An RNA of 177 nucleotides, treated with 2A3 and DMS and read out base by base.
It was measured as part of the RMDB libraries RFM100 and RFMREP.
For 2A3, 2,619 sequencing reads were counted.
The RNA was probed in 150 mM KOAc, 10 mM MgCl2 and 150 mM bicine (pH 8.5) at 24 C.
[RMDB]
RNA sequence: GGGAACGACUCGAGUAGAGUCGAAAAAUAGUCCUUUUCUAAACCUUAUGGCUGGUGCAGCCGCCCGCCAGUGCUUGCGGGUGUGCACAGGCCUACAUCUAGGGUCAUAGGUGGGGAGCGGAUCCUGUGAUAAAAACCCAUUCGUGGGUUUUUAUCAAAAAGAAACAACAACAACAAC
Reactivity to 2A3 in 0.01 (KOAc 150mM, MgCl2 10mM, bicine 150mM(pH8.5), 24C), signal-to-noise 4, nucleotides 027 to 126: a000u130a020g040u040c010c010u020u030u070u040c080u080a110a100a110c000c000u070u070a040u100g020g000c020u050g060g020u010g000c010a010g090c070c020g000c000c000c000g010c010c030a180g070u160g150c120u060u040g000c000g010g000g010u020g010u010g000c000a000c010a020g030g000c010c010u010a000c010a090u080c050u060a040g050g000g040u040c040a080u080a100g030g020u050g010g040g000g000a050g080c050g030g010a030u030c000c010u080g010
Reactivity to DMS in 0.01 (KOAc 150mM, MgCl2 10mM, bicine 150mM(pH8.5), 24C), signal-to-noise 4, nucleotides 027 to 126: a090u030a180g000u000c020c000u010u020u020u010c040u010a060a230a070c010c020u000u010a070u010g000g000c010u020g000g020u000g030c010a050g030c290c050g000c000c000c000g030c000c120a210g030u010g010c200u030u010g010c000g000g000g020u000g000u000g010c010a030c020a170g020g000c020c000u010a050c180a090u030c190u030a020g010g000g010u000c050a070u010a060g000g000u010g010g000g000g000a030g000c080g000g020a070u000c010c010u010g020